An RNA of 170 nucleotides, treated with 2A3 and DMS and read out base by base. For DMS the reverse transcriptase was MarathonRT. It was measured as part of the RMDB library 15KLIB. For 2A3, 7,794 sequencing reads were counted. For DMS, 9,066 sequencing reads were counted.
RNA sequence: GGGAACGACUCGAGUAGAGUCGAAAACUAUGGCACCUGUUGAAUUUUAUGAAGACCGCAUCUUGGACUUUAAAGUUCUUGAUAAUGGUAUCAUUAGGGAUGUAAAUCCUGAUGAUAAGUGCUUUGCGACGCUCGGAGUUCGCUCCGAGCAAAAGAAACAACAACAACAAC
Reactivity to 2A3 in 0.01 (KOAc 150mM, MgCl2 10mM, bicine 150mM(pH8.5), 24C), signal-to-noise 4, nucleotides 027 to 129: c050u050a150u110g000g000c010a010c010c020u010g110u040u090g060a140a150u120u090u080u120a070u140g040a060a030g050a020c000c000g020c050a030u010c000u010u020g000g010a000c000u040u070u230a210a260a000g010u020u010c000u000u000g020a000u030a080a080u160g020g010u020a000u000c000a000u000u000a040g000g000g030a020u080g070u250a010a120a060u030c000c000u010g040a040u020g000a000u000a090a000g000u000g000c000u080u070u110g030c030g020a040c060
Reactivity to DMS in 0.01 (KOAc 150mM, MgCl2 10mM, bicine 150mM(pH8.5), 24C), signal-to-noise 3, nucleotides 027 to 129: c000u020a080u050g010g020c010a040c000c140u030g030u000u000g000a080a050u020u010u010u010a080u080g020a100a150g050a030c000c000g050c220a070u010c020u000u100g010g030a030c020u030u000u120a080a160a060g020u010u070c020u000u000g020a020u060a080a070u000g000g030u020a020u010c000a030u000u000a000g030g020g040a030u060g040u090a090a160a010u010c010c010u080g020a100u040g020a060u030a040a080g030u060g000c110u080u010u060g060c100g010a120c100